[RMDB]
RNA sequence: GGGAACGACUCGAGUAGAGUCGAAAAGAUGCGGCUGCAUGUAGGUCUGACGAUGAUGGUUUCUUCGGUCGAGCGCUGAAGCCGCUGCCGCGGUUUCCAACGGUGGAACUACAGGAACUUGCCAUGACACUCACUGGCUAUUCGUAGCCAGUGAGUGAAAAGAAACAACAACAACAAC
Reactivity to DMS in 0.01 (KOAc 150mM, MgCl2 10mM, bicine 150mM(pH8.5), 24C), signal-to-noise 2, nucleotides 027 to 126: g010a050u010g010c010g020g010c000u000g000c040a090u000g030u000a030g020g010u010c010u000g020a050c060g010a060u030g000a080u000g010g010u010u000u000c010u000u000c030g010g030u010c030g010a030g010c040g010c080u000g040a090a130g010c040c030g030c010u000g010c050c080g020c040g000g000u000u010u000c010c050a100a090c070g000g010u010g020g010a040a040c000u020a070c060a080g000g010a040a060c120u010u000g000c020c030a090u000g000a270
Reactivity to 2A3 in 0.01 (KOAc 150mM, MgCl2 10mM, bicine 150mM(pH8.5), 24C), signal-to-noise 1, nucleotides 027 to 126: g070a040u100g020c000g030g020c020u030g030c030a080u040g040u080a030g020g090u000c060u080g020a010c010g000a050u120g000a040u090g140g120u070u100u000c010u020u050c020g110g050u060c080g080a020g060c040g020c100u060g060a030a000g000c000c020g040c010u000g000c000c030g000c020g010g000u030u030u010c020c000a070a050c070g090g040u080g050g030a030a000c000u050a030c070a080g020g050a040a040c020u030u080g000c020c010a070u080g020a000